The data come from the RNA Mapping Database (RMDB), library RFMREP. This 177-nucleotide RNA was probed chemically with DMS and 2A3. Values cover nucleotides 27 to 126. The 2A3 profile rests on 652 reads.
[RMDB]
RNA sequence: GGGAACGACUCGAGUAGAGUCGAAAAACGAAAGAGGAAUUCCUAGUAAGUGUGUAUCAACAAUGGAUAUUGAAUAAGUCCCUGUAGCUUGUACACACCGCCCGUCACUAUCUCAGAUGUUUUUCAGCCGAUACUAUGUCUUCGGACAUAGUAUCGGAAAAGAAACAACAACAACAAC
Reactivity to DMS in 0.01 (KOAc 150mM, MgCl2 10mM, bicine 150mM(pH8.5), 24C), signal-to-noise 1, nucleotides 027 to 126: a030c050g010a120a140a160g000a040g010g010a180a130u000u000c000c000u000a080g010u030a040a090g020u000g000u000g000u000a020u020c050a020a000c040a050a110u000g000g000a050u000a170u000u000g000a080a140u000a130a110g000u000c000c000c110u000g010u010a040g050c220u020u000g020u000a020c000a030c050a020c000c070g020c050c090c030g020u000c070a020c120u000a090u000c010u000c100a040g030a160u040g000u000u000u010u000u010c200a090g010
Reactivity to 2A3 in 0.01 (KOAc 150mM, MgCl2 10mM, bicine 150mM(pH8.5), 24C), signal-to-noise 1, nucleotides 027 to 126: a000c010g040a010a000a030g010a000g040g000a100a050u100u010c020c000u030a000g080u040a150a120g010u000g000u020g000u090a070u240c060a000a050c020a020a030u010g000g020a000u060a150u130u220g100a080a130u140a150a010g080u000c000c000c020u090g070u060a060g000c110u010u000g030u010a000c010a010c000a020c070c030g010c000c060c000g110u070c030a020c140u150a070u120c070u010c050a100g040a180u150g070u000u050u000u000u080c060a040g010